[RMDB]
RNA sequence: GGGAACGACUCGAGUAGAGUCGAAAAAUUUGCUCGUGCGGUUCGUGAUGCUUAUGCCUCGAACUAUGUGGCAACUCAACAGCUCAACGCAACGUUGUCUGUCCAUUCUGAGGUCACUGGUUUGGACAUCUUAACUUCCAUUCGUGGAAGUUAAGAUAAAAGAAACAACAACAACAAC
Reactivity to 2A3 in 0.01 (KOAc 150mM, MgCl2 10mM, bicine 150mM(pH8.5), 24C), signal-to-noise 8, nucleotides 027 to 126: a000u060u060u070g030c020u030c040g020u050g070c130g040g020u030u030c010g020u070g060a130u130g020c030u170u170a140u300g020c010c000u010c030g010a030a020c020u030a090u170g080u060g010g010c010a020a190c030u030c050a040a050c010a040g010c020u020c050a040a040c050g030c070a050a080c110g020u020u000g040u030c030u020g020u000c030c010a090u100u030c030u070g100a040g070g020u060c030a030c110u050g020g030u010u010u020g020g010a020c010
Reactivity to DMS in 0.01 (KOAc 150mM, MgCl2 10mM, bicine 150mM(pH8.5), 24C), signal-to-noise 9, nucleotides 027 to 126: a070u010u000u000g010c020u000c050g020u000g020c120g000g000u000u000c030g020u000g010a120u010g020c030u010u010a110u010g020c010c020u000c020g000a030a030c050u000a040u010g020u010g000g000c010a040a060c100u000c060a100a080c100a070g000c100u000c050a040a050c090g010c160a090a080c160g010u000u000g010u000c040u000g010u000c060c050a080u000u000c070u000g000a080g010g010u010c140a040c040u000g000g010u000u000u000g010g000a080c090
Source information
Structure probing data (2A3 and DMS) for a 177-nucleotide construct. The data come from the RNA Mapping Database (RMDB), library OK2TST. The reactions ran in a buffer of 150 mM KOAc, 10 mM MgCl2 and 150 mM bicine (pH 8.5), at 24 C. The 2A3 profile rests on 14,786 reads.